[RMDB]
The data come from the RNA Mapping Database (RMDB), library RFM100. This 177-nucleotide RNA was probed chemically with 2A3. 2A3 adducts were read by reverse transcription with SuperScript II with manganese. The RNA was probed in 150 mM KOAc, 10 mM MgCl2 and 150 mM bicine (pH 8.5) at 24 C. 2A3 is a SHAPE reagent: it acylates the 2'-hydroxyl of flexible nucleotides of all four kinds. For 2A3, 466 sequencing reads were counted.

RNA sequence: GGGAACGACUCGAGUAGAGUCGAAAAAGCAAUAUUCGGAGGUAAGGGAGACAUGAACAACUAAGUCUAUCAAAUAAAGAACCUUUAUUUAGUAGAUCUUGUUUCUGUCUCUUUUUGUGUACUCUUAGCAAGGGGCUAAAUUCGUUUAGCCCCUUGCAAAAGAAACAACAACAACAAC
Reactivity to 2A3 in 0.01 (KOAc 150mM, MgCl2 10mM, bicine 150mM(pH8.5), 24C), signal-to-noise 2, nucleotides 027 to 126: a000g300c250a230a040u300a070u100u260c090g010g070a010g000g090u160a100a090g000g010g010a000g030a000c000a040u220g000a030a000c070a020a010c090u210a140a040g000u050c000u010a000u130c030a000a000a030u000a000a000a140g080a140a060c010c000u030u000u000a000u000u000u000a000g000u000a000g000a000u110c030u030u040g030u020u140u000c010u000g000u000c000u040c060u000u000u000u000u000g000u000g010u000a020c010u020c000u000u000a000